[RMDB]
RNA sequence: GGGAACGACUCGAGUAGAGUCGAAAAGAUAUGGACCUGCUCCCCACCUCGUCCUAGCGUUUGACGUCGGAAACGACCGAGCUAGGCGAGAGGCAGGUCCUAAGUCAAAGAGGUCUUCGGACCUCAACGGAUCUUAUUAGUUCGCUAAUAAGAUCCGAAAAGAAACAACAACAACAAC
Reactivity to DMS in 0.01 (KOAc 150mM, MgCl2 10mM, bicine 150mM(pH8.5), 24C), signal-to-noise 6, nucleotides 027 to 126: g000a100u010a170u000g000g000a010c000c000u000g000c010u010c140c010c000c050a300c080c000u000c010g000u020c010c000u010a000g010c010g010u000u000u020g000a090c300g000u000c000g010g000a080a050a130c020g010a000c000c050g000a070g000c000u000a010g000g000c000g000a000g000a030g000g010c000a010g000g000u000c010c000u000a020a050g010u000c070a080a130a140g000a010g010g010u000c000u010u020c170g030g000a020c010c000u000c010a010a100
Reactivity to 2A3 in 0.01 (KOAc 150mM, MgCl2 10mM, bicine 150mM(pH8.5), 24C), signal-to-noise 4, nucleotides 027 to 126: g050a040u180a140u200g000g000a000c000c010u000g020c000u130c050c010c010c000a020c000c010u020c010g300u300c030c000u000a010g000c040g040u090u210u300g140a140c090g000u000c010g000g040a050a070a080c010g000a010c020c030g010a020g000c000u000a000g000g000c010g000a000g000a000g000g010c000a000g020g000u000c000c000u000a000a010g010u010c020a000a030a100g010a010g000g020u000c000u050u070c210g140g010a000c000c000u000c000a000a000
Chemical mapping of a 177-nucleotide RNA with DMS and 2A3. For DMS the reverse transcriptase was MarathonRT. It was measured as part of the RMDB library TTRDEL. For 2A3 the reverse transcriptase was SuperScript II with manganese. The 2A3 profile rests on 13,186 reads. The RNA was probed in 150 mM KOAc, 10 mM MgCl2 and 150 mM bicine (pH 8.5) at 24 C.